[RMDB]
RNA sequence: GGGAACGACUCGAGUAGAGUCGAAAAUAGGAGGAAUAAUCACAGGGGAGCCAAAGUAGCGGAUGUCUGUGGAUUCCCCGUCCCAGCGCCAGUGGCUCUUAGGGUAGGGGUUGUAACGGAAGGCAAUAAUCACAUCAUCCAAUAGGGUCAUGCCCACCCUUUGGGAUCCUUUCGAGGAUCCCAAAGGAAAAGAAACAACAACAACAAC
Reactivity to 2A3 in 0.01 (KOAc 150mM, MgCl2 10mM, bicine 150mM(pH8.5), 24C), signal-to-noise 1, nucleotides 027 to 156: u030a070g000g000a030g030g020a070a040u120a110a030u160c090a110c020a130g020g030g050g000a060g000c010c020a120a100a000g120u060a080g100c020g010g080a030u010g060u080c060u110g140u110g020g090a040u060u190c000c000c000c030g000u000c020c000c000a000g030c010g000c060c020a020g020u050g050g010c000u040c000u080u090a020g010g060g000u060a050g040g000g100g000u060u050g020u110a030a020c040g090g000a000a000g100g000c020a000a030u080a060a000u020c000a090c000a150u020c000a040u000c030c000a050a020u050a070g020g000g000u020c030a040u080g000c000c010c000a050c020